Chemical mapping of a 177-nucleotide RNA with DMS and 2A3.
The DMS profile rests on 8,613 reads.
The data come from the RNA Mapping Database (RMDB), library OK1LIB.
For DMS the reverse transcriptase was MarathonRT.
Reactivities are given for positions 27 through 126.
2A3 adducts were read by reverse transcription with SuperScript II with manganese.
RNA sequence: GGGAACGACUCGAGUAGAGUCGAAAAGACUGCGUGCACUCGAGACGAUAUCGAGCCGGAAAUUAAUCGAUAAUGUCUCUCGUAGUGGAUACGAUCCGGCAAGUAUCGACUACCUGUGCUCGUAGGACACUACCCUAGGAUUCGUCCUAGGGUAGUGAAAAGAAACAACAACAACAAC
Reactivity to DMS in 0.01 (KOAc 150mM, MgCl2 10mM, bicine 150mM(pH8.5), 24C), signal-to-noise 3, nucleotides 027 to 126: g010a180c010u000g020c010g070u010g010c030a010c000u030c300g000a010g000a030c010g000a050u000a000u030c000g000a140g010c020c020g010g000a100a160a150u050u060a070a070u010c020g000a040u000a030a080u010g000u020c000u010c020u010c240g000u000a030g000u020g000g010a020u020a000c010g000a090u010c010c000g000g000c000a100a170g000u010a000u000c010g000a040c010u000a020c020c300u010g030u000g020c000u000c000g010u000a000g000g000a140
Reactivity to 2A3 in 0.01 (KOAc 150mM, MgCl2 10mM, bicine 150mM(pH8.5), 24C), signal-to-noise 9, nucleotides 027 to 126: g070a010c000u000g000c000g010u010g000c000a000c010u020c020g000a000g010a010c010g010a010u010a010u070c020g000a010g010c000c000g020g080a080a130a100u240u200a130a170u200c020g010a020u040a070a090u140g040u010c010u010c010u050c080g030u030a020g030u030g140g010a010u000a010c010g010a030u010c000c000g000g000c030a040a000g000u000a000u020c030g050a010c000u080a160c000c040u040g000u000g000c000u000c010g000u000a000g000g020a000